RNA sequence: GGGAACGACUCGAGUAGAGUCGAAAAGAUAUGGAUUUCCGAUAAGUCGACCGUCACUACCCACCCUCACACAUCGGAAACGAUGUGGAGGAGGUGACGGUCGACUUUUGACGGAAAUCCUAAGUCAGAUUUCAAUUACCUUCGGGUAAUUGAAAUCAAAAGAAACAACAACAACAAC
Reactivity to DMS in 0.01 (KOAc 150mM, MgCl2 10mM, bicine 150mM(pH8.5), 24C), signal-to-noise 1, nucleotides 027 to 126: g000a090u000a300u000g020g020a000u000u000u000c000c000g050a240u000a010a010g010u000c000g000a000c000c000g000u000c010a000c000u010a050c080c090c210a300c080c010c000u000c000a160c000a030c000a000u000c000g020g000a280a070a250c000g010a000u000g000u000g020g020a020g000g000a110g000g000u000g000a000c000g040g010u000c000g010a000c000u010u000u010u020g010a190c120g040g000a010a000a000u000c000c010u010a010a050g000u010c070a100